An RNA of 177 nucleotides, treated with 2A3 and DMS and read out base by base. Reactivities are rounded to 0.1 and cut off at 0 and 3. Conditions: 150 mM KOAc, 10 mM MgCl2 and 150 mM bicine (pH 8.5), 24 C.

RNA sequence: GGGAACGACUCGAGUAGAGUCGAAAACUCAAAUGUACAAAAAUAAAUGGCAGAACCAGUGAUGCUGAACGCUGAACUGGGCGUUUCAGAGCUAGGGUCUAGUCUCAGUCCCGCCUUGAGAAAACCGCGUCUCAUACAGAUUCGUCUGUAUGAGACGAAAAGAAACAACAACAACAAC
Reactivity to 2A3 in 0.01 (KOAc 150mM, MgCl2 10mM, bicine 150mM(pH8.5), 24C), signal-to-noise 2, nucleotides 027 to 126: c030u050c020a030a070a070u220g010u120a180c070a070a170a030a010a110u220a070a140a030u150g010g060c020a010g020a090a020c000c000a000g010u010g070a060u070g070c020u060g090a110a000c050g000c000u030g020a110a030c100u110g040g100g010c020g020u080u080u030c050a020g000a030g040c030u150a140g040g000g040u020c040u040a080g070u060c030u020c080a020g090u020c010c000c000g020c020c070u040u060g060a040g030a040a100a010a010c010c010g020
Reactivity to DMS in 0.01 (KOAc 150mM, MgCl2 10mM, bicine 150mM(pH8.5), 24C), signal-to-noise 2, nucleotides 027 to 126: c050u000c020a070a100a090u010g010u000a070c100a020a080a130a110a060u010a080a050a050u000g010g000c050a030g000a040a080c040c010a060g020u000g000a150u000g040c030u000g000a080a130c070g020c000u010g010a140a070c160u000g010g000g000c050g010u000u000u000c010a040g030a120g000c030u000a050g040g020g000u020c010u000a040g000u000c040u000c060a050g010u000c040c020c000g020c130c060u000u020g000a060g010a060a040a080a190c050c080g000

For DMS the reverse transcriptase was MarathonRT.